[RMDB]
RNA sequence: GGGAACGACUCGAGUAGAGUCGAAAAAUGUCUAGGGGCUAAGGAUGUCCUACAGGUACCCGCACGUAACCUUCAGAGAGUGUGGAUCUGAGUAGGAGACUGUGGUGCGCUGCUUUACAGACGUAGCGAAUGUAUUGUAUUUCGAUACAAUACAUUCAAAAGAAACAACAACAACAAC
Reactivity to DMS in 0.01 (KOAc 150mM, MgCl2 10mM, bicine 150mM(pH8.5), 24C), signal-to-noise 9, nucleotides 027 to 126: a070u020g010u000c020u010a160g010g010g000g010c050u010a080a100g010g010a110u020g010u000c010c010u000a020c020a300g000g000u010a090c120c010c010g000c010a010c020g000u060a020a020c010c010u000u000c300a070g000a300g000a040g000u000g010u000g000g010a040u000c010u000g000a140g010u000a020g010g000a080g000a080c050u000g020u010g010g010u000g010c050g010c040u000g010c040u000u010u010a080c110a060g000a060c070g010u010a070g010c170
Reactivity to 2A3 in 0.01 (KOAc 150mM, MgCl2 10mM, bicine 150mM(pH8.5), 24C), signal-to-noise 9, nucleotides 027 to 126: a000u090g010u010c010u030a070g030g020g010g000c020u050a050a040g080g030a120u100g090u080c000c000u000a000c000a000g030g010u040a080c010c010c000g000c000a000c020g300u080a020a020c010c000u030u040c020a010g010a000g000a010g030u010g000u020g010g010a010u000c010u020g040a060g090u020a010g010g020a020g010a020c030u040g040u070g100g040u060g040c070g010c040u050g010c000u060u050u050a070c040a040g030a030c040g060u060a020g050c030